[RMDB]
RNA sequence: GGGAACGACUCGAGUAGAGUCGAAAAACGGAGAGCAGUGGCUGGCUCGGCGUCUCGGCACGGGGAAGUGCACCGCUGGCUGCCGAGUUUGACGAGAUCUGCAUCAAUGACGGUCGGCUUCUGCUUACAUUCAUUGCAUCUUCGGAUGCAAUGAAUGAAAAGAAACAACAACAACAAC
Reactivity to 2A3 in 0.01 (KOAc 150mM, MgCl2 10mM, bicine 150mM(pH8.5), 24C), signal-to-noise 9, nucleotides 027 to 126: a010c100g050g020a090g000a000g010c010a010g000u030g030g010c010u010g010g010c020u030c040g010g000c010g010u000c010u010c000g010g010c000a020c030g080g000g030g070a170a090g120u090g100c080a100c030c030g110c100u030g070g020c060u090g000c000c000g000a000g000u040u050u090g050a040c020g020a020g020a180u020c030u120g040c040a050u090c050a070a190u170g050a040c040g020g010u030c000g010g000c000u020u020c000u020g010c000u010u020a010
Reactivity to DMS in 0.01 (KOAc 150mM, MgCl2 10mM, bicine 150mM(pH8.5), 24C), signal-to-noise 4, nucleotides 027 to 126: a060c080g020g000a130g010a040g000c010a010g000u020g000g000c000u010g010g020c000u020c020g000g000c020g010u020c000u000c010g010g000c030a030c030g010g010g010g010a120a170g020u010g000c130a090c080c050g010c090u000g000g010c080u000g020c000c000g000a070g000u010u010u000g000a040c080g010a110g000a080u010c080u030g030c060a120u020c120a060a090u000g000a120c110g000g010u010c000g010g010c020u000u000c010u000g000c030u000u000a150
The data come from the RNA Mapping Database (RMDB), libraries RFM100 and RFMREP. Chemical mapping of a 177-nucleotide RNA with 2A3 and DMS. The RNA was probed in 150 mM KOAc, 10 mM MgCl2 and 150 mM bicine (pH 8.5) at 24 C.